[RMDB]
RNA sequence: GGGAACGACUCGAGUAGAGUCGAAAAGAUAUGGAUGAUUGGUCCCUUCAACAGCGAGAAUGUUCAAGGUUCGGAAACGAACCUUGAACAUUCUCGACAUGAAGAUGACCACUGUCAUCCUAAGUCACUUAUAUUGUGCCUUCGGGCACAAUAUAAGAAAAGAAACAACAACAACAAC
Reactivity to DMS in 0.01 (KOAc 150mM, MgCl2 10mM, bicine 150mM(pH8.5), 24C), signal-to-noise 2, nucleotides 027 to 126: g000a040u000a300u000g000g000a010u010g010a030u000u000g000g020u000c010c260c000u010u000c000a050a140c300a200g000c020g020a010g010a020a000u000g000u000u010c000a030a000g020g000u000u000c000g030g000a060a090a160c010g020a010a000c000c000u000u000g000a000a000c000a000u010u000c000u000c000g000a010c120a230u000g030a010a000g000a070u000g010a020c000c000a030c300u020g020u000c000a000u000c000c030u000a020a100g000u000c080a130